An RNA of 177 nucleotides, treated with DMS and 2A3 and read out base by base. The RNA was probed in 150 mM KOAc, 10 mM MgCl2 and 150 mM bicine (pH 8.5) at 24 C. For DMS, 2,949 sequencing reads were counted.
RNA sequence: GGGAACGACUCGAGUAGAGUCGAAAAGACGGAAAAGAUCGAACCUAAGAAGAUUAGGAAGUGUGAGCCGAAUCCUAGGGCUCCUAGGGACGCAUCGUCCGAUGCGAAAUAAACACGAACGUCGAAAGAUAUGGUGCGGAUUCGUCCGCACCAUAUCAAAAGAAACAACAACAACAAC
Reactivity to DMS in 0.01 (KOAc 150mM, MgCl2 10mM, bicine 150mM(pH8.5), 24C), signal-to-noise 2, nucleotides 027 to 126: g000a070c050g000g000a060a070a030a060g020a170u000c100g000a070a250c000c000u010a010a030g020a170a090g000a110u050u000a000g000g000a130a050g020u010g000u010g000a000g000c020c020g010a050a060u010c050c020u000a070g000g030g030c050u000c010c130u030a010g000g020g020a300c000g010c010a000u040c000g000u020c220c140g000a000u000g000c040g020a010a060a060u010a060a070a120c030a000c020g030a060a180c000g000u000c000g000a110a060a090
Reactivity to 2A3 in 0.01 (KOAc 150mM, MgCl2 10mM, bicine 150mM(pH8.5), 24C), signal-to-noise 3, nucleotides 027 to 126: g000a000c010g050g080a000a210a050a000g130a060u160c120g010a030a070c000c000u010a000a000g070a090a040g040a190u020u020a000g060g000a080a110g010u010g050u060g080a000g050c070c100g070a060a090u040c000c000u010a030g000g010g030c030u060c010c000u010a070g000g030g000a010c000g010c010a020u020c000g220u120c110c200g010a000u010g040c010g000a020a040a100u210a010a120a020c040a000c060g050a110a020c010g000u020c000g070a010a060a010
For 2A3, 2,318 sequencing reads were counted.